[RMDB]
RNA sequence: GGGAACGACUCGAGUAGAGUCGAAAAGAAAGAAGGACAGUUUCGGUGAGAUAUGUUUGAUAUUCUUGGUUGUUAAGAUUUCAAUUAUCACCCAGGAAUCAAACAUAUUAUUACCGUGACUGUCGAAACGGAACGAACUAUUCGUAGUUCGUUCCGUAAAAGAAACAACAACAACAAC
Reactivity to 2A3 in 0.01 (KOAc 150mM, MgCl2 10mM, bicine 150mM(pH8.5), 24C), signal-to-noise 5, nucleotides 027 to 126: g170a040a060a000g140a020a080g190g000a000c010a000g000u000u000u020c010g000g000u010g000a010g000a000u010a000u010g000u000u000u010g040a040u050a120u100u030c000u000u010g030g000u020u030g030u060u000a040a020g020a160u160u270u160c090a080a060u040u030a010u040c000a000c010c000c010a000g000g000a000a000u010c000a000a000a000c000a000u000a000u000u010a120u000u010a000c000c000g000u000g000a000c000u000g000u000c000g000a020a000
Reactivity to DMS in 0.01 (KOAc 150mM, MgCl2 10mM, bicine 150mM(pH8.5), 24C), signal-to-noise 1, nucleotides 027 to 126: g010a130a110a120g000a160a100g050g000a000c010a020g000u000u000u000c000g000g010u010g010a000g030a000u000a000u000g030u010u000u000g020a030u000a110u000u000c000u000u000g010g000u000u000g000u000u000a000a030g000a230u040u020u050c270a060a140u000u000a000u000c000a000c060c000c000a000g010g020a000a000u000c000a000a010a000c000a000u000a000u000u000a010u000u000a000c010c020g000u000g000a010c000u000g010u010c000g000a000a070